RNA sequence: GGGAACGACUCGAGUAGAGUCGAAAAUUGUCCUGGCCUAUUUUUCUGCUCCCCUGUGCUCAGUUCUAACAGGGUAGUCUGGCAGGACACACAGCAAUUCCCUCUCAGUUUAGGAGGGCCGUCCUAAACGGAUCGUAUAGUUCGCUAUACGAUCCGUAAAAGAAACAACAACAACAAC
Reactivity to DMS in 0.01 (KOAc 150mM, MgCl2 10mM, bicine 150mM(pH8.5), 24C), signal-to-noise 4, nucleotides 027 to 126: u030u000g000u000c010c010u000g030g030c000c000u020a090u020u010u010u030u030c170u040g020c000u000c040c000c010c020u000g000u000g020c160u030c140a110g020u060u020c110u030a130a030c020a000g000g000g000u000a020g010u000c230u000g010g000c020a010g000g010a010c030a060c260a080c110a120g000c180a100a120u000u020c000c010c010u020c040u010c060a260g030u010u010u020a030g000g000a080g000g000g030c180c100g010u000c010c000u000a030a050
Reactivity to 2A3 in 0.01 (KOAc 150mM, MgCl2 10mM, bicine 150mM(pH8.5), 24C), signal-to-noise 8, nucleotides 027 to 126: u100u040g020u030c020c000u080g210g150c020c010u210a270u120u190u020u060u080c060u140g010c010u040c000c000c000c000u000g010u010g020c030u050c230a160g040u270u120c070u100a030a000c000a000g010g020g010u000a000g020u020c100u050g000g000c000a000g000g010a000c000a000c010a000c000a010g100c020a030a120u070u060c000c030c000u000c010u010c010a150g010u040u050u120a030g010g000a000g000g050g000c010c020g060u000c010c000u020a090a050